An RNA of 207 nucleotides, treated with 2A3 and read out base by base. For 2A3, 709 sequencing reads were counted. For 2A3 the reverse transcriptase was SuperScript II with manganese.

RNA sequence: GGGAACGACUCGAGUAGAGUCGAAAAGAAACCGAGCUGACGCCUGCCUGACCCUGGCGAUGGUGGCGCGCGCCGGGAAGGACUGAUUGGAGAAUGGCGCCAAAUGGGUCACGGAUGGCGAGGGGGCACAGGAGCUCUCGAUGUGACCUGGCGCUGAUACCGGGUAAUGAUUCGUCAUUACCCGGUAAAAAGAAACAACAACAACAAC
Reactivity to 2A3 in 0.01 (KOAc 150mM, MgCl2 10mM, bicine 150mM(pH8.5), 24C), signal-to-noise 2, nucleotides 027 to 156: g070a010a050a000c030c000g000a030g020c040u060g040a150c040g000c000c000u050g000c010c000u040g110a140c010c010c090u070g070g000c090g030a060u010g000g040u040g000g030c050g000c010g000c020g000c010c000g000g000g070a030a030g040g050a030c000u030g020a150u210u080g050g040a060g030a100a170u200g040g000c000g000c000c000a060a110a230u300g010g030g000u020c000a000c000g080g050a070u110g080g020c050g040a050g020g030g000g010g030c090a050c050a180g070g040a080g040c000u000c000u010c040g000a030u130g000u000g010a000c010c000u000g000g000c000g030c000u000g010a000